Source: RMDB library OK3TST, as collected in RNAgym.
The record gives the reactivity of an RNA of 207 nucleotides to 2A3 and DMS.
The reactions ran in a buffer of 150 mM KOAc, 10 mM MgCl2 and 150 mM bicine (pH 8.5), at 24 C.
The 2A3 profile rests on 761 reads.
DMS adducts were read by reverse transcription with MarathonRT.
Values cover nucleotides 27 to 156.
RNA sequence: GGGAACGACUCGAGUAGAGUCGAAAACAACUUCCGGUUCCGCGCUGAAUGCGGAGAAGCUGCGUAAAAUUAUUGAAUGCAAAGCAUAAAAUCCUCAAUCAAAUUCAUGAUGCGUGAAGACGAAAGACAAAAGCGUUUCGAAUUCGCUUCAGGUAGAUGAUGGAGCAUAUUUCGAUAUGCUCCAUCAAAAAGAAACAACAACAACAAC
Reactivity to 2A3 in 0.01 (KOAc 150mM, MgCl2 10mM, bicine 150mM(pH8.5), 24C), signal-to-noise 2, nucleotides 027 to 156: c030a010a070c030u110u000c030c000g040g020u060u010c000c000g020c000g000c110u180g080a210a090u100g110c000g090g010a010g010a010a010g000c030u050g000c030g060u080a030a040a260a070u080u140a130u080u250g070a010a000u010g020c000a090a040a000g000c020a010u180a060a100a040a070u010c010c040u090c040a040a070u040c020a030a100a030u060u070c040a060u140g030a080u070g000c030g050u040g000a010a000g130a030c010g030a110a000a000g010a010c050a070a150a020a010g020c000g010u000u040u040c040g000a070a040u030u010c020g000c000u010u000c010a050g050g000u040a030g010a160
Reactivity to DMS in 0.01 (KOAc 150mM, MgCl2 10mM, bicine 150mM(pH8.5), 24C), signal-to-noise 1, nucleotides 027 to 156: c010a030a110c030u000u000c010c020g010g040u010u000c010c000g020c050g020c060u000g020a230a210u000g000c010g020g000a070g030a060a130g070c010u010g000c210g000u000a040a070a160a240u010u050a160u000u000g000a170a090u010g000c020a150a180a140g020c020a070u000a010a060a080a120u000c020c010u000c050a020a110u020c050a020a050a280u000u000c060a100u000g000a060u000g000c020g020u000g020a090a070g020a150c000g020a020a080a090g000a130c060a030a050a020a180g010c000g020u020u030u000c030g000a030a180u000u010c010g020c020u000u000c000a000g000g020u010a070g000a120